[RMDB]
RNA sequence: GGGAACGACUCGAGUAGAGUCGAAAAAGCAGGAGUACGCUCUUGCAUGGGUAGACGAAUUGACCCCAACUGAAGUUCAAUUCUAACGUUAAAAGGAGUUUUAUAUGACUGGACGUACGCGUCCAGAUGACGAUUUCAUUCUUCGGAAUGAAAUCAACCUUAGUUAAGAGUUCGCUCUUAACUAAGGAAAAGAAACAACAACAACAAC
Reactivity to 2A3 in 0.01 (KOAc 150mM, MgCl2 10mM, bicine 150mM(pH8.5), 24C), signal-to-noise 4, nucleotides 027 to 156: a000g000c000a000g000g030a000g000u070a050c160g050c080u010c000u000u000g000c010a030u020g000g000g020u130a070g070a150c060g010a030a010u000u000g020a010c000c000c000c010a080a080c170u260g050a030a000g020u070u000c000a000a000u000u010c010u070a130a080c150g070u110u180a070a060a020a060g130g030a110g010u040u050u140u100a140u080a100u190g140a060c000u000g000g000a010c010g010u060a020c240g010c010g080u000c000c000a000g000a010u040g040a030c100g000a000u000u000u020c000a000u000u000c010u030u020c070g070g010a000a000u000g000a000a000a000u010c000a000a020
Reactivity to DMS in 0.01 (KOAc 150mM, MgCl2 10mM, bicine 150mM(pH8.5), 24C), signal-to-noise 2, nucleotides 027 to 156: a110g060c000a040g000g000a010g040u000a110c260g070c000u000c000u000u010g000c010a210u000g000g000g000u000a140g030a130c060g030a060a030u010u000g000a040c040c010c000c010a010a250c200u000g000a060a050g010u040u000c030a010a040u000u000c010u010a130a050c110g000u000u000a090a010a110a100g000g000a160g060u000u000u000u000a130u000a120u000g000a200c010u000g000g000a030c010g050u000a120c230g030c060g070u000c000c000a030g020a040u010g010a180c100g010a000u000u000u000c010a010u000u000c000u000u000c300g000g020a020a010u030g000a010a010a000u000c000a050a080